The record gives the reactivity of an RNA of 177 nucleotides to DMS and 2A3. 2A3 adducts were read by reverse transcription with SuperScript II with manganese.
[RMDB]
RNA sequence: GGGAACGACUCGAGUAGAGUCGAAAAAGACAAUGUUGUGAAGCUACCACGUGUUGGAUUAUGGCUGAACGCCUCUAAGUCAGAAUCCGUGCUAGAUACAAUGACCUUGUCCCGCGCAUUUACCGUUUUUAAUGGGAACGUUCGCGUUCCCAUUAAAAAAAGAAACAACAACAACAAC
Reactivity to DMS in 0.01 (KOAc 150mM, MgCl2 10mM, bicine 150mM(pH8.5), 24C), signal-to-noise 3, nucleotides 027 to 126: a090g000a120c130a090a080u000g010u010u020g040u000g000a120a100g020c010u000a080c080c000a010c040g000u050g020u030u020g020g000a050u000u000a090u000g000g040c000u000g000a080a130c160g010c030c010u000c040u040a130a100g010u000c040a050g000a030a030u010c020c030g000u010g010c120u000a030g000a040u040a030c070a110a020u010g000a080c050c030u010u000g010u000c010c020c010g030c060g030c100a050u010u010u020a040c080c030g010u010u000
Reactivity to 2A3 in 0.01 (KOAc 150mM, MgCl2 10mM, bicine 150mM(pH8.5), 24C), signal-to-noise 4, nucleotides 027 to 126: a000g060a020c060a080a050u050g010u040u010g040u030g050a080a050g020c020u040a030c030c000a010c050g150u150g070u150u200g040g000a020u010u050a020u150g010g000c010u040g020a150a040c060g040c030c010u000c040u030a020a060g020u020c000a010g060a000a000u000c020c010g000u030g000c000u020a020g010a070u030a120c060a050a110u070g030a030c000c000u000u020g040u030c000c000c000g020c000g010c020a030u030u080u110a070c040c030g040u020u020
For 2A3, 2,189 sequencing reads were counted. For DMS, 4,797 sequencing reads were counted.